[RMDB]
RNA sequence: GGGAACGACUCGAGUAGAGUCGAAAAAAGCUUCAAUUCUGGCGUUACGCAUAGCUGGCUGUUAGCUCUAUUCCUUACUAGUUCACGACUAACAGUUUUUGUAACCAAAACCUGAGCUUAGCUCGGGCGUUGUGCAAAGCUUCGGCUUUGCACAACGAAAAGAAACAACAACAACAAC
Reactivity to 2A3 in 0.01 (KOAc 150mM, MgCl2 10mM, bicine 150mM(pH8.5), 24C), signal-to-noise 2, nucleotides 027 to 126: a000a000g120c130u170u070c090a130a170u180u040c010u040g060g010c020g050u000u030a030c100g020c070a090u150a060g010c010u000g050g010c060u040g000u010u050a020g010c030u000c000u110a100u020u050c020c000u080u050a080c090u050a040g070u040u090c040a020c040g020a020c010u000a070a010c000a020g000u000u000u000u040u080g020u050a000a000c010c030a050a030a020a020c010c000u000g000a030g000c010u140u160a050g010c000u000c000g000g000g010
Reactivity to DMS in 0.01 (KOAc 150mM, MgCl2 10mM, bicine 150mM(pH8.5), 24C), signal-to-noise 1, nucleotides 027 to 126: a080a050g000c100u020u000c050a130a230u000u000c110u000g000g000c120g030u000u020a030c260g000c080a030u000a140g050c000u030g000g000c120u000g010u000u000a020g000c110u000c030u000a040u040u050c010c040u030u000a080c160u000a000g000u000u010c040a020c000g000a050c000u090a100a000c150a030g000u000u000u000u000u000g000u080a070a130c000c080a180a010a170a300c000c000u000g090a040g000c020u060u080a130g000c000u000c000g000g000g000
The record gives the reactivity of an RNA of 177 nucleotides to 2A3 and DMS.
It was measured as part of the RMDB library RFM100.
For 2A3 the reverse transcriptase was SuperScript II with manganese.